[RMDB]
RNA sequence: GGGAACGACUCGAGUAGAGUCGAAAAGCUUAUUGAUAGCAAAGUUGUACAAACAGUCUUGGAGCGUGCGACAUUGCUUGUAUAUACACGUAAACAACAGCACAUUGUUAAAAACACCAAGGUUCAAGACUGGAUAAAUAUUCGUAUUUAUCCAGUCAAAAGAAACAACAACAACAAC
Reactivity to 2A3 in 0.01 (KOAc 150mM, MgCl2 10mM, bicine 150mM(pH8.5), 24C), signal-to-noise 7, nucleotides 027 to 126: g000c030u100u050a020u140u300g090a110u140a040g000c000a040a050a030g020u040u030g030u050a040c030a040a170a010c020a040g050u020c040u050u050g050g030a070g090c080g010u010g010c020g020a020c020a060u010u050g010c000u030u040g050u010a140u010a000u010a110c060a000c080g060u050a040a110a020c030a050a000c020a060g030c020a010c010a080u040u070g040u080u110a190a120a040a030a010c020a010c010c010a010a020g050g020u080u090c050a080a020
Reactivity to DMS in 0.01 (KOAc 150mM, MgCl2 10mM, bicine 150mM(pH8.5), 24C), signal-to-noise 8, nucleotides 027 to 126: g000c050u000u000a280u000u000g020a120u010a030g010c010a060a070a120g020u000u000g010u000a040c070a080a200a130c070a090g000u010c110u010u010g010g020a110g020c280g010u000g010c050g010a040c050a070u000u000g000c020u010u000g010u010a070u010a070u000a060c130a050c160g010u000a060a060a080c090a040a050c070a060g000c070a040c180a100u000u000g000u010u010a030a060a070a080a040c060a080c040c030a040a060g010g010u010u000c100a050a150

This 177-nucleotide RNA was probed chemically with 2A3 and DMS. 2A3 adducts were read by reverse transcription with SuperScript II with manganese. It was measured as part of the RMDB library OK2TST. The reactions ran in a buffer of 150 mM KOAc, 10 mM MgCl2 and 150 mM bicine (pH 8.5), at 24 C. DMS adducts were read by reverse transcription with MarathonRT.